This 177-nucleotide RNA was probed chemically with 2A3 and DMS. For 2A3 the reverse transcriptase was SuperScript II with manganese. The reactions ran in a buffer of 150 mM KOAc, 10 mM MgCl2 and 150 mM bicine (pH 8.5), at 24 C. Values cover nucleotides 27 to 126. For DMS the reverse transcriptase was MarathonRT. It was measured as part of the RMDB libraries RFM100 and RFMREP.
[RMDB]
RNA sequence: GGGAACGACUCGAGUAGAGUCGAAAACUUAGAAGCUUUAAGAUUCAUCGCAUUGAACUUGAUACGUAUAGUACAGCACCUUGAAAACAAAUCAUCUGCUAGUUCAGUAUUUUCUACUUACAAUCACUCCUUUUAACCUUUUCGAAGGUUAAAAGGAAAAAGAAACAACAACAACAAC
Reactivity to 2A3 in 0.01 (KOAc 150mM, MgCl2 10mM, bicine 150mM(pH8.5), 24C), signal-to-noise 9, nucleotides 027 to 126: c020u090u060a030g050a100a020g090c030u080u100u120a070a040g030a130u050u080c020a030u060c090g010c100a090u030u070g020a030a020c010u040u050g020a040u050a080c030g060u090a060u110a190g030u040a020c010a030g000c010a070c020c020u030u060g050a050a060a020a030c060a020a080a040u040c020a010u010c010u030g010c020u030a010g030u050u030c010a010g030u020a100u060u050u000u030c030u030a090c010u110u050a050c060a040a040u080c020a030c070
Reactivity to DMS in 0.01 (KOAc 150mM, MgCl2 10mM, bicine 150mM(pH8.5), 24C), signal-to-noise 5, nucleotides 027 to 126: c020u010u010a070g010a100a090g000c070u000u010u010a070a060g010a110u000u000c040a030u000c140g010c100a050u020u020g000a070a020c050u000u010g000a100u000a030c080g010u010a070u010a090g010u000a040c070a030g020c050a060c070c030u000u010g010a050a040a060a100c190a060a100a090u010c040a040u010c040u000g020c020u010a050g000u010u000c060a050g010u000a030u030u010u010u000c020u000a030c070u000u010a060c160a050a090u010c120a080c130